About this RNA: Chemical mapping of a 177-nucleotide RNA with 2A3 and DMS. 2A3 adducts were read by reverse transcription with SuperScript II with manganese. Conditions: 150 mM KOAc, 10 mM MgCl2 and 150 mM bicine (pH 8.5), 24 C. Values cover nucleotides 27 to 126. It was measured as part of the RMDB library OK2TST.
[RMDB]
RNA sequence: GGGAACGACUCGAGUAGAGUCGAAAACAAAAGUCCACAAGCUCACACCUAGUGAUGCAAUGACUGAGUGCCUUGAACUCACUAAGUGUACCUUGUCAACUCAUGUCAGCAACCAUUCUAGACUGUAAUUAUCCGUUUUAUUCGUAAAACGGAUAAUAAAAGAAACAACAACAACAAC
Reactivity to 2A3 in 0.01 (KOAc 150mM, MgCl2 10mM, bicine 150mM(pH8.5), 24C), signal-to-noise 8, nucleotides 027 to 126: c030a000a110a030a020g060u040c040c010a020c030a040a030g020c010u050c050a020c000a010c010c030u030a020g000u000g030a040u100g000c010a020a080u050g030a030c050u150g110a040g100u220g020c010c000u030u020g040a090a050c020u010c030a020c040u070a060a050g020u010g000u050a040c010c010u030u040g030u040c020a050a110c020u020c050a040u130g030u020c010a010g030c030a080a070c020c010a040u090u050c020u060a040g030a150c030u050g030u110a050
Reactivity to DMS in 0.01 (KOAc 150mM, MgCl2 10mM, bicine 150mM(pH8.5), 24C), signal-to-noise 9, nucleotides 027 to 126: c070a070a110a130a090g000u010c070c230a050c060a040a050g010c060u000c130a030c020a050c050c060u000a030g010u000g010a020u000g020c040a050a040u010g010a030c020u020g010a120g010u010g010c040c030u000u000g000a120a100c130u000c010a020c030u000a020a050g020u000g010u000a070c300c020u000u000g000u000c090a050a050c040u000c060a070u010g010u000c030a060g010c080a060a130c080c040a060u000u000c060u010a090g000a100c070u000g010u010a100